Source: RMDB library OK1LIB, as collected in RNAgym. This 177-nucleotide RNA was probed chemically with DMS and 2A3. DMS adducts were read by reverse transcription with MarathonRT. Conditions: 150 mM KOAc, 10 mM MgCl2 and 150 mM bicine (pH 8.5), 24 C. For 2A3 the reverse transcriptase was SuperScript II with manganese. For DMS, 1,379 sequencing reads were counted.
[RMDB]
RNA sequence: GGGAACGACUCGAGUAGAGUCGAAAACGAGCGUGGUGACGACGGAGAUGCUGAUGCCCGGCUGCAGACCCGGAAUGUUGCCGGCGGCCGAAAAGGCGAUCGGCACCAUGUUUGAAAUGCCGAUGCCACUACGGCUGGGUUUCGACCCAGCCGUAGUAAAAGAAACAACAACAACAAC
Reactivity to DMS in 0.01 (KOAc 150mM, MgCl2 10mM, bicine 150mM(pH8.5), 24C), signal-to-noise 1, nucleotides 027 to 126: c040g000a020g000c070g020u040g000g000u000g000a010c000g010a070c070g000g000a060g000a100u050g000c040u100g000a140u000g010c060c030c020g010g000c000u010g010c100a110g000a250c090c040c070g000g000a140a070u020g000u030u010g050c000c000g020g000c090g000g140c000c040g000a000a080a120a050g000g000c000g000a030u000c020g010g010c000a070c120c140a060u000g000u010u000u040g000a020a210a140u030g000c010c000g000a100u020g010c090c010
Reactivity to 2A3 in 0.01 (KOAc 150mM, MgCl2 10mM, bicine 150mM(pH8.5), 24C), signal-to-noise 2, nucleotides 027 to 126: c020g010a120g070c000g020u060g050g000u000g060a050c030g000a000c000g030g020a100g050a070u140g000c070u030g010a030u160g030c000c070c010g000g020c010u020g000c000a000g000a260c000c000c070g020g020a170a110u110g010u040u080g020c000c000g000g080c020g040g000c010c010g100a150a080a010a050g040g000c060g130a120u000c000g000g000c000a000c020c000a070u080g160u110u050u200g020a000a020a010u040g000c000c000g070a040u010g000c110c030